[RMDB]
RNA sequence: GGGAACGACUCGAGUAGAGUCGAAAAACGUCCAUUACGAUGGACGAAAGUCUCCUAAUUUUUAGGGACUGAUGUUAUUUUUAACGUGUCUCCUAUUUUUAGGGACCAGCAGCGUUACGACGCUGCAACUUUUGAGCUUAUUCGUAAGCUCAAAAGUAAAAGAAACAACAACAACAAC
Reactivity to 2A3 in 0.01 (KOAc 150mM, MgCl2 10mM, bicine 150mM(pH8.5), 24C), signal-to-noise 9, nucleotides 027 to 126: a000c000g000u000c000c000a000u020u030a100c280g090a020u010g000g000a000c000g030a050a010a000g010u000c110u100c060c010u010a030a040u030u060u040u030u070a010g010g000g010a010c030u070g110a110u130g030u030u030a120u100u240u080u080u090a020a010c030g030u030g020u040c050u060c110c000u010a010u020u030u000u000u010a010g000g000g010a010c020c010a010g000c000a000g000c000g010u030u070a100c300g020a010c000g060c000u000g000c000a000
Reactivity to DMS in 0.01 (KOAc 150mM, MgCl2 10mM, bicine 150mM(pH8.5), 24C), signal-to-noise 9, nucleotides 027 to 126: a120c020g010u000c000c000a010u000u010a110c180g020a040u000g000g000a010c010g000a030a040a060g010u000c010u040c000c000u000a010a020u010u010u010u000u010a010g000g000g000a010c000u000g010a070u030g000u000u000a020u020u020u020u030u000a010a040c050g010u020g000u000c000u040c010c000u000a010u000u000u000u000u000a000g000g000g000a020c010c120a100g010c000a000g010c000g010u000u010a130c160g010a080c000g010c000u000g010c010a040
Conditions: 150 mM KOAc, 10 mM MgCl2 and 150 mM bicine (pH 8.5), 24 C. The record gives the reactivity of an RNA of 177 nucleotides to 2A3 and DMS. 2A3 adducts were read by reverse transcription with SuperScript II with manganese.